[RMDB]
RNA sequence: GGGAACGACUCGAGUAGAGUCGAAAAAGCGGCCCGGGGGUGGCGGCGCAACGACACGCAGUGGCGAGCGCAAGUGUCGGGACAGCGAGCGCAGGCAUUGGGAUGGUGAGCGGAGGCGUCGGGGGCGCUGAUCUUCUCCUUUCGAGGAGAAGAUCAGAAAAGAAACAACAACAACAAC
Reactivity to DMS in 0.01 (KOAc 150mM, MgCl2 10mM, bicine 150mM(pH8.5), 24C), signal-to-noise 3, nucleotides 027 to 126: a040g000c050g000g010c030c020c060g020g010g010g000g040u010g000g020c040g000g000c010g000c080a060a090c040g020a050c050a070c040g010c180a160g030u000g010g030c080g000a170g000c020g020c050a060a150g040u000g010u010c020g020g000g040a070c160a100g010c060g010a120g020c030g030c070a150g010g000c050a060u030u010g030g000g000a100u030g040g000u010g000a060g040c130g000g000a110g010g030c090g000u000c060g000g040g000g000g010c100g010
Reactivity to 2A3 in 0.01 (KOAc 150mM, MgCl2 10mM, bicine 150mM(pH8.5), 24C), signal-to-noise 3, nucleotides 027 to 126: a010g060c010g000g060c010c000c000g000g000g010g000g020u050g060g000c030g030g000c000g000c030a030a060c020g020a010c020a010c050g100c050a060g010u060g100g040c060g050a080g020c000g000c030a090a020g020u030g020u080c010g010g010g040a060c060a020g020c030g030a030g010c060g000c060a030g090g010c050a050u080u130g040g000g060a120u070g000g040u090g020a000g000c070g000g080a040g040g020c020g000u070c070g050g000g000g000g010c030g000

An RNA of 177 nucleotides, treated with DMS and 2A3 and read out base by base. For DMS the reverse transcriptase was MarathonRT. The data come from the RNA Mapping Database (RMDB), library OK1LIB.